Structure probing data (DMS and 2A3) for a 177-nucleotide construct.
RNA sequence: GGGAACGACUCGAGUAGAGUCGAAAACAAGUUUUUGGUGUACAGAUCAACAAAGAAGUGGAGUUGGCUGCUCAACUGAGGGAGAAGCAUAUUUUGCGAACUCAAACUGUGCUUUGUGACAUGCUCCGCUACACUCCAGGUUCGCCUGGAGUGUAGCAAAAGAAACAACAACAACAAC
Reactivity to DMS in 0.01 (KOAc 150mM, MgCl2 10mM, bicine 150mM(pH8.5), 24C), signal-to-noise 1, nucleotides 027 to 126: c050a080a000g000u000u000u030u000u000g020g010u000g000u070a090c040a020g000a010u010c020a030a090c140a040a120a090g040a150a010g000u000g020g000a020g000u000u000g000g000c080u030g000c020u000c020a000a070c200u050g020a060g000g050g010a080g030a100a050g010c030a030u000a060u000u020u000u000g040c140g010a070a270c110u080c030a000a090a020c000u010g000u000g000c000u000u000u120g000u050g000a010c190a220u000g000c020u000c020c120
Reactivity to 2A3 in 0.01 (KOAc 150mM, MgCl2 10mM, bicine 150mM(pH8.5), 24C), signal-to-noise 3, nucleotides 027 to 126: c090a090a100g010u060u060u040u100u130g090g000u050g000u070a060c030a050g060a160u100c010a030a150c010a000a090a000g020a080a000g060u090g060g020a010g010u000u050g130g000c030u010g050c000u010c070a090a220c090u090g050a080g080g060g000a070g050a060a000g000c000a010u070a160u090u040u140u110g020c030g040a030a020c030u000c070a030a030a210c040u030g040u100g090c000u020u020u050g060u010g030a030c000a040u060g030c020u000c040c030
Values are in units of 0.01, from 0 to 300, in steps of 10.
2A3 adducts were read by reverse transcription with SuperScript II with manganese.
The 2A3 profile rests on 1,188 reads.